[RMDB]
RNA sequence: GGGAACGACUCGAGUAGAGUCGAAAAGAUAUGGAAUUAACACAUCAGCCUACCUGUCGGAAACGACAGGAGGCGACGACGUGUUGAAUUCCUAAGUCAAAGAUCUGCAGCUUCGGCUGCAGAUCAACUGCAAAUUAUAGUUCGCUAUAAUUUGCAGAAAAGAAACAACAACAACAAC
Reactivity to DMS in 0.01 (KOAc 150mM, MgCl2 10mM, bicine 150mM(pH8.5), 24C), signal-to-noise 3, nucleotides 027 to 126: g010a010u000a160u000g000g000a020a030u000u000a010a010c000a020c000a070u010c040a100g010c000c000u000a110c010c000u000g010u010c000g010g000a050a070a110c010g010a010c000a010g010g000a030g000g020c000g020a030c300g000a010c110g010u000g000u000u000g020a050a070u000u000c000c000u000a040a140g000u000c000a170a140a180g010a010u000c000u000g010c000a010g000c000u000u000c300g050g000c000u000g000c000a000g000a010u000c000a020a100
Reactivity to 2A3 in 0.01 (KOAc 150mM, MgCl2 10mM, bicine 150mM(pH8.5), 24C), signal-to-noise 3, nucleotides 027 to 126: g000a010u050a030u090g000g000a010a010u000u010a010a000c000a000c010a070u300c060a070g000c000c020u200a300c090c010u060g000u010c000g000g020a040a020a020c000g020a000c020a000g000g020a000g000g000c010g090a030c060g030a000c030g020u000g000u020u040g100a010a070u010u000c010c000u000a030a000g030u030c070a300a050a100g000a000u000c010u020g000c000a030g020c010u090u180c300g240g000c000u010g000c020a000g000a000u010c000a010a000